[RMDB]
RNA sequence: GGGAACGACUCGAGUAGAGUCGAAAAAAUGCGGUAGUGAGGGGAUUUUUUGAUGCGUCUUAACGUCGCCUUCUAUUUAUUGCGUUUACUACUAAGCCAAUAAGUAAAAUACGCAACUGCACAGCUACCUCUAUAAUCUGUUCGCAGAUUAUAGAGGAAAAGAAACAACAACAACAAC
Reactivity to 2A3 in 0.01 (KOAc 150mM, MgCl2 10mM, bicine 150mM(pH8.5), 24C), signal-to-noise 3, nucleotides 027 to 126: a000a000u090g010c010g020g000u030a030g020u040g060a020g020g020g010g000a010u020u030u010u050u060u080g040a020u050g020c090g090u000c020u040u030a040a020c030g020u020c020g180c040c000u030u010c020u020a070u010u100u010a070u040u020g020c020g000u000u040u010a010c030u000a030c040u040a020a050g050c010c010a060a050u070a050a020g010u030a020a080a030a060u140a030c020g010c020a030a030c030u070g010c040a050c000a080g030c020u050a060
Reactivity to DMS in 0.01 (KOAc 150mM, MgCl2 10mM, bicine 150mM(pH8.5), 24C), signal-to-noise 4, nucleotides 027 to 126: a100a100u000g010c020g010g010u000a050g020u000g010a050g010g000g000g000a010u000u000u010u010u020u010g010a070u010g020c120g010u010c050u000u010a030a070c110g020u000c040g000c030c020u000u010c050u000a010u010u010u000a040u010u000g010c130g020u000u010u000a080c240u010a090c120u000a040a070g010c060c090a020a040u000a020a020g010u000a010a040a050a090u010a080c050g010c030a010a040c100u000g000c050a030c080a090g010c100u010a110
The record gives the reactivity of an RNA of 177 nucleotides to 2A3 and DMS. For 2A3, 4,440 sequencing reads were counted. The data come from the RNA Mapping Database (RMDB), library RFMREP. For DMS the reverse transcriptase was MarathonRT. For DMS, 3,746 sequencing reads were counted.